[RMDB]
RNA sequence: GGGAACGACUCGAGUAGAGUCGAAAAUGUCUUUACUGACAAGUUCAAAUAAUCGUUUAAAUUAAACAGCUGCAUAUCAAAUUUAGGAUUGUUGGUUAAAACUCCUACAGGAUUGUCAUAUACCUACAUUUAGGCUACUAUUCGUAGUAGCCUAAAUAAAAGAAACAACAACAACAAC
Reactivity to 2A3 in 0.01 (KOAc 150mM, MgCl2 10mM, bicine 150mM(pH8.5), 24C), signal-to-noise 4, nucleotides 027 to 126: u090g030u010c010u030u150u150a150c170u110g050a030c000a060a070g040u090u180c130a160a100a100u170a070a120u080c040g050u020u040u110a150a230a170u100u140a210a180a020c020a010g000c010u020g000c000a000u000a000u060c010a040a170a120u120u150u090a060g050g010a060u040u060g030u000u010g060g050u030u090a040a080a050a020c040u040c010c010u030a090c010a000g150g000a050u080u110g050u100c050a000u060a020u080a190c020c070u010a040c010
Reactivity to DMS in 0.01 (KOAc 150mM, MgCl2 10mM, bicine 150mM(pH8.5), 24C), signal-to-noise 5, nucleotides 027 to 126: u040g010u010c020u010u030u030a140c090u020g010a070c030a040a080g010u030u010c050a130a110a100u040a060a100u020c050g000u000u020u010a050a050a100u020u030a110a200a020c010a010g020c030u000g010c020a020u020a000u010c010a140a110a150u030u010u020a030g020g000a130u020u010g010u000u000g010g010u020u030a030a060a060a030c040u010c020c010u020a090c250a070g010g000a050u020u010g000u000c040a080u010a070u020a090c050c000u020a050c190